[RMDB]
Record summary:
Chemical mapping of a 177-nucleotide RNA with DMS. For DMS, 1,032 sequencing reads were counted.
RNA sequence: GGGAACGACUCGAGUAGAGUCGAAAAGGAAUUAAGUUUUCCAACACUUCACCUUUCGCUAAACGCUCACGGAACUCAUCCGUUUUAGCGCGCAAUUCGGUGUCUGUCAGUUUUUCAAUAUCAGGUAGGACGUCAUUUUAUUCGUAAAAUGACGUCCAAAAGAAACAACAACAACAAC
Reactivity to DMS in 0.01 (KOAc 150mM, MgCl2 10mM, bicine 150mM(pH8.5), 24C), signal-to-noise 2, nucleotides 027 to 126: g000g000a030a040u020u020a060a090g000u010u000u020u010c040c050a070a120c110a040c090u010u000c210a020c000c000u010u000u000c060g000c040u000a090a100a090c140g020c050u000c300a000c030g010g010a020a160c280u010c210a200u000c000c030g000u000u010u020u000a020g030c020g050c150g030c070a020a040u000u000c200g020g000u000g000u000c040u020g020u000c080a120g020u010u020u010u000u010c060a080a100u020a050u010c100a060g010g000u020a110